[RMDB]
RNA sequence: GGGAACGACUCGAGUAGAGUCGAAAAUCAGUCAAGACGAAUUCCCGAAAGCGGAUUCUACGACUGAAGCGUUAGGCGCAUUGCGCCCGGCCUUCGAUAAAGCAGGAACAGUCACCGCCGGGAACGACACCCUCCCUAUCUUCGGAUAGGGAGGGUGAAAAGAAACAACAACAACAAC
Reactivity to 2A3 in 0.01 (KOAc 150mM, MgCl2 10mM, bicine 150mM(pH8.5), 24C), signal-to-noise 2, nucleotides 027 to 126: u030c020a000g170u120c060a060a110g100a100c080g080a070a110u060u080c040c010c000g050a150a130a010g050c040g030g040a030u100u030c030u070a030c090g030a030c000u050g010a010a020g040c070g060u080u130a030g000g000c010g020c270a300u100u300g030c020g000c000c020c000g010g010c000c010u050u010c020g060a140u100a300a150a010g030c050a040g060g090a040a030c020a010g040u030c010a030c080c000g000c000c000g040g020g020a010a030c020g110a010
Reactivity to DMS in 0.01 (KOAc 150mM, MgCl2 10mM, bicine 150mM(pH8.5), 24C), signal-to-noise 2, nucleotides 027 to 126: u000c070a120g010u030c110a100a060g000a200c160g010a090a230u000u000c000c010c020g060a090a110a190g000c150g010g010a130u000u000c040u010a110c120g000a070c050u000g000a010a020g010c260g000u000u000a070g010g030c000g040c000a180u020u010g010c040g000c000c000c000g000g000c000c030u000u010c070g000a100u010a060a130a190g030c070a000g030g000a010a050c210a080g000u010c070a130c040c000g010c080c020g000g000g000a030a030c120g000a180
An RNA of 177 nucleotides, treated with 2A3 and DMS and read out base by base. DMS adducts were read by reverse transcription with MarathonRT. Source: RMDB library OK2TST, as collected in RNAgym. The DMS profile rests on 735 reads. The RNA was probed in 150 mM KOAc, 10 mM MgCl2 and 150 mM bicine (pH 8.5) at 24 C.